[RMDB]
RNA sequence: GGGAACGACUCGAGUAGAGUCGAAAACUGCACAAGGCGAUCGGCUACGGCCUCUCCGCUUCCGAUCCCGCGCGCGCCCUCGACCAUCUGCGCCGCGCGCUGCAGCUCUUCGCGAACGUGGGCGUGACGAUUCACGGGGUUUCGACCCCGUGAAUCGAAAAGAAACAACAACAACAAC
Reactivity to DMS in 0.01 (KOAc 150mM, MgCl2 10mM, bicine 150mM(pH8.5), 24C), signal-to-noise 1, nucleotides 027 to 126: c040u000g040c060a060c170a060a200g000g010c130g000a000u000c080g010g000c130u000a100c070g000g000c300c100u000c170u000c080c030g000c050u000u000c000c010g020a050u000c010c010c000g030c200g010c000g020c000g010c000c010c020u000c010g020a130c050c050a060u000c010u040g030c030g000c060c030g000c050g050c070g020c060u000g010c040a050g040c130u000c010u000u000c110g030c040g010a160a100c050g050u000g010g010g010c030g000u000g010a160